[RMDB]
RNA sequence: GGGAACGACUCGAGUAGAGUCGAAAAUAGUUAAGAUAGUGAACAGAGCUAUCAGUAGCAGGAUCAGGUGCUAAGAUAGGGAAUGUCAUUUCAUUAUACUUUUUACCAGGAAGGGGUCCUACAACAACUACGAAGUAUCGUUCGCGAUACUUCGUAGAAAAGAAACAACAACAACAAC
Reactivity to DMS in 0.01 (KOAc 150mM, MgCl2 10mM, bicine 150mM(pH8.5), 24C), signal-to-noise 3, nucleotides 027 to 126: u000a050g000u010u010a020a100g000a070u000a010g000u000g000a110a100c110a060g010a300g020c020u000a030u000c000a130g020u010a050g010c010a030g000g040a120u010c200a110g000g020u000g000c020u010a070a090g000a040u000a000g010g000g010a110a140u000g010u000c070a030u000u000u010c070a070u000u000a030u020a040c020u000u010u000u010u050a090c070c020a160g010g000a060a070g000g020g020g020u000c010c010u010a010c070a010a020c100a050a200
Reactivity to 2A3 in 0.01 (KOAc 150mM, MgCl2 10mM, bicine 150mM(pH8.5), 24C), signal-to-noise 1, nucleotides 027 to 126: u120a020g050u030u060a070a010g000a090u100a020g090u010g070a120a010c020a110g030a020g070c000u010a010u030c070a030g060u010a000g000c010a000g030g040a070u150c020a030g260g040u030g060c000u020a020a020g000a010u020a010g000g010g050a200a140u040g040u020c030a040u030u060u010c050a040u000u090a060u040a080c010u030u080u000u010u010a050c020c000a020g150g080a050a070g050g030g000g020u020c030c000u070a040c020a030a010c000a000a040